[RMDB]
RNA sequence: GGGAACGACUCGAGUAGAGUCGAAAAGCAGUUCCAGAGUCUGUGGACUCUGAAUACUAGCGGUCAGUCGUCGUCCACAGACGACGUGAAGUGAUUAUGAGAAUGAUCACACUGACGAGGUAUUCUCAUAUCUCCUAUCGCUAGGAACUGGAUAGGCCCAUUUAAUGCAGUUCGCUGCAUUAAAUGGAAAAGAAACAACAACAACAAC
Reactivity to 2A3 in 0.01 (KOAc 150mM, MgCl2 10mM, bicine 150mM(pH8.5), 24C), signal-to-noise 9, nucleotides 027 to 156: g060c010a010g010u020u010c010c000a000g000a000g000u020c040u110g140u290g170g000a000c000u000c010u020g030a030a020u130a120c010u010a010g080c020g030g000u020c060a020g020u030c000g000u000c000g000u010c040c050a130c040a130g000a000c000g000a000c000g020u050g090a120a030g020u020g010a020u020u080a010u040g050a030g030a100a040u070g040a020u040c010a010c020a030c130u100g050a040c050g020a030g030g020u040a020u090u090c080u020c040a010u010a010u010c030u000c010c020u070a050u090c000g000c010u010a010g010g020a000a020c020u020g020g020a060u090a130g100g000c000
Reactivity to DMS in 0.01 (KOAc 150mM, MgCl2 10mM, bicine 150mM(pH8.5), 24C), signal-to-noise 4, nucleotides 027 to 156: g020c000a050g000u000u000c010c010a080g000a070g010u000c030u010g070u010g040g010a050c030u000c010u000g020a060a080u010a140c020u000a050g020c040g030g000u010c040a070g020u000c010g010u010c010g010u000c020c120a150c290a200g010a030c000g010a020c010g020u000g010a110a150g030u000g010a040u010u000a020u020g010a270g000a190a050u000g000a060u000c020a030c020a300c060u000g010a090c090g010a150g020g020u000a020u010u010c100u010c070a100u000a050u000c010u000c020c060u000a070u000c010g010c020u000a070g010g030a060a060c010u010g020g000a130u000a120g000g030c150
This 207-nucleotide RNA was probed chemically with 2A3 and DMS. Values cover nucleotides 27 to 156. The 2A3 profile rests on 13,473 reads. For DMS, 9,620 sequencing reads were counted. For 2A3 the reverse transcriptase was SuperScript II with manganese.